Chemical mapping of a 177-nucleotide RNA with DMS and 2A3. 2A3 adducts were read by reverse transcription with SuperScript II with manganese. Conditions: 150 mM KOAc, 10 mM MgCl2 and 150 mM bicine (pH 8.5), 24 C. DMS adducts were read by reverse transcription with MarathonRT.
RNA sequence: GGGAACGACUCGAGUAGAGUCGAAAAUCAUUCAGCAAUUAAAUUAUUGCUCGAUGGAGGAGAUUGAUGAAUUACGCUGGUCGCUGUGCACAAUCGCCAUGAACACUGCCCAUUUAUCCUUCGAGUGGUCCCGAAAGGUAUUCGUACCUUUCGGGACAAAAGAAACAACAACAACAAC
Reactivity to DMS in 0.01 (KOAc 150mM, MgCl2 10mM, bicine 150mM(pH8.5), 24C), signal-to-noise 2, nucleotides 027 to 126: u040c020a040u000u010c110a020g010c000a000a020u000u000a080a170a160u010u000a080u010u000g010c020u000c150g020a030u000g000g000a050g010g000a080g000a050u000u000g000a040u000g000a070a070u010u000a070c100g030c060u000g000g030u000c080g060c040u000g010u010g010c000a030c040a060a020u000c070g020c020c020a110u000g000a060a100c070a090c140u000g000c010c040c010a110u010u020u000a110u010c040c020u000u000c080g010a060g020u000g020
Reactivity to 2A3 in 0.01 (KOAc 150mM, MgCl2 10mM, bicine 150mM(pH8.5), 24C), signal-to-noise 2, nucleotides 027 to 126: u060c010a000u120u000c010a000g050c020a010a070u030u080a120a190a150u240u190a130u040u080g000c010u050c090g000a030u030g000g040a030g050g020a060g010a010u030u060g050a070u050g020a050a120u120u040a050c100g030c060u020g000g100u100c040g000c050u110g020u040g040c050a000c000a040a040u020c050g000c030c030a010u070g070a080a020c100a000c070u080g060c040c010c020a030u050u040u010a100u010c000c040u060u090c010g050a090g160u100g040